[RMDB]
RNA sequence: GGGAACGACUCGAGUAGAGUCGAAAAAGGGGUGCCAGGGGACCUGGGGCUGCCGGCCGAGCUGGGGGACCUGGGCAUCGAGGCUAUGGAGCUGCUCCGGCGAGGGGGUGGCACAGCCGUGUGCCACGAACGAUACUUCAUUCGUGAAGUAUCGUUCAAAAGAAACAACAACAACAAC
Reactivity to 2A3 in 0.01 (KOAc 150mM, MgCl2 10mM, bicine 150mM(pH8.5), 24C), signal-to-noise 2, nucleotides 027 to 126: a030g070g010g010g000u030g010c030c010a020g000g010g000g040a020c010c010u040g060g010g040g010c020u070g140c020c060g020g000c000c050g060a070g040c030u070g010g010g010g020g030a020c010c000u040g000g030g000c010a030u060c060g000a050g050g000c030u070a080u190g060g030a060g000c030u040g010c020u050c010c010g020g010c040g020a080g010g000g000g010g000u010g010g020c020a000c000a010g110c050c080g110u070g010u010g000c010c010a020c030
Reactivity to DMS in 0.01 (KOAc 150mM, MgCl2 10mM, bicine 150mM(pH8.5), 24C), signal-to-noise 4, nucleotides 027 to 126: a100g010g000g010g020u010g000c020c020a090g000g000g000g010a130c030c010u000g020g010g010g030c040u000g010c070c060g010g010c050c070g010a110g010c020u000g010g000g000g010g000a110c030c020u000g020g000g000c040a030u000c070g010a120g010g010c040u000a100u010g000g010a110g020c050u000g010c040u000c020c030g010g000c080g010a120g010g010g000g010g030u000g000g010c000a020c010a070g000c120c160g020u000g010u000g010c000c010a050c070
An RNA of 177 nucleotides, treated with 2A3 and DMS and read out base by base. For DMS the reverse transcriptase was MarathonRT. For 2A3, 5,132 sequencing reads were counted. 2A3 is a SHAPE reagent: it acylates the 2'-hydroxyl of flexible nucleotides of all four kinds. The DMS profile rests on 7,905 reads. Source: RMDB library OK2TST, as collected in RNAgym. Values cover nucleotides 27 to 126.